Source information
Chemical mapping of a 177-nucleotide RNA with 2A3 and DMS. The RNA was probed in 150 mM KOAc, 10 mM MgCl2 and 150 mM bicine (pH 8.5) at 24 C. For 2A3, 922 sequencing reads were counted. For DMS the reverse transcriptase was MarathonRT.

[RMDB]
RNA sequence: GGGAACGACUCGAGUAGAGUCGAAAAGGAAAUCAAAAUUAGAGAAGUGAAGGCUGACAUUAGAAAGGUAAUGAAGGUAGGAUAUUGUCACUGGUUUACGGUAACCACCACCACCAAAAUAAAAAAAGUAUAAAAUGGUGUUCGCACCAUUUUAUACAAAAGAAACAACAACAACAAC
Reactivity to 2A3 in 0.01 (KOAc 150mM, MgCl2 10mM, bicine 150mM(pH8.5), 24C), signal-to-noise 1, nucleotides 027 to 126: g050g010a030a050a050u060c020a000a000a130a180u280u180a060g020a040g010a160a000g010u010g040a030a000g090g050c020u010g010a020c030a010u020u000a060g060a120a170a000g060g060u090a010a100u090g040a020a010g060g000u040a050g000g100a080u010a030u140u180g040u010c040a040c090u040g000g070u080u070u040a020c030g010g010u000a040a000c000c000a000c000c000a000c000c000a020c060c030a000a160a030a030u090a050a020a050a000a000a000a000
Reactivity to DMS in 0.01 (KOAc 150mM, MgCl2 10mM, bicine 150mM(pH8.5), 24C), signal-to-noise 2, nucleotides 027 to 126: g000g020a060a060a100u000c060a040a050a090a130u000u020a110g030a090g020a060a060g010u000g000a080a110g020g010c010u010g000a150c090a050u000u020a060g000a030a090a040g000g020u000a070a060u010g020a020a060g010g010u000a140g000g000a040u000a040u010u010g010u000c010a090c020u010g020g000u010u010u000a060c060g030g000u000a040a120c030c050a070c080c030a070c000c070a060c110c060a060a110a030a040u030a050a060a120a030a030a020a110